[RMDB]
RNA sequence: GGGAACGACUCGAGUAGAGUCGAAAAUGCAGUGUCGUGUUCCAACAUCCUUACCUGUUCCACGGGACGAUCCGCGACAACGUGUUCGCUGCAGACCCGGGCGCUAGUGACGAUCAGUUUGCGCAAGUGACGGGUCUGCUUUCGAGCAGACCCGUCAAAAAGAAACAACAACAACAAC
Reactivity to DMS in 0.01 (KOAc 150mM, MgCl2 10mM, bicine 150mM(pH8.5), 24C), signal-to-noise 1, nucleotides 027 to 126: u000g000c010a030g010u000g010u000c020g060u000g040u000u000c030c050a120a070c170a060u020c070c030u000u000a120c080c060u010g000u000u020c010c030a160c180g010g010g020a060c060g190a110u000c080c030g020c040g020a020c100a020a050c170g020u000g000u010u010c060g000c080u000g020c030a050g000a110c020c000c000g030g000g010c000g020c010u000a030g000u000g000a090c070g000a100u000c160a120g020u000u000u000g020c020g000c020a130a090g020